[RMDB]
RNA sequence: GGGAACGACUCGAGUAGAGUCGAAAAGCCAGCUCCGACGUCCCGGUGGCCGACGUGGCCGCCACGGCCGCCGGCGUUCUCGGCCCGGAGUUUGCCACUGUCGGCUCGCUUCUCAUGAUCGCCGGUGGUAGCAGUCGGAUUUCGAUCCGACUGCUACAAAAGAAACAACAACAACAAC
Reactivity to 2A3 in 0.01 (KOAc 150mM, MgCl2 10mM, bicine 150mM(pH8.5), 24C), signal-to-noise 1, nucleotides 027 to 126: g000c030c040a000g020c050u010c020c020g060a030c020g050u010c060c000c000g010g030u020g000g030c030c000g040a100c100g070u120g080g030c050c070g060c070c000a020c000g020g010c000c000g020c010c030g040g010c010g040u110u000c030u050c000g060g050c060c010c000g030g000a050g020u000u120u130g030c060c000a150c070u250g030u120c030g000g000c000u050c010g040c020u090u070c000u000c020a120u200g020a080u030c030g010c030c000g070g000u040g070
Reactivity to DMS in 0.01 (KOAc 150mM, MgCl2 10mM, bicine 150mM(pH8.5), 24C), signal-to-noise 1, nucleotides 027 to 126: g030c010c050a110g000c050u000c020c000g000a060c060g010u010c050c040c030g010g050u000g010g020c000c040g040a070c200g030u000g000g020c050c080g000c030c090a050c140g000g000c010c040g000c030c000g000g000c060g000u000u010c020u010c100g060g010c050c020c080g000g010a060g000u000u000u000g020c000c010a070c100u000g000u000c080g020g030c020u000c060g010c120u000u000c050u040c090a080u020g000a110u020c040g020c040c010g030g010u000g020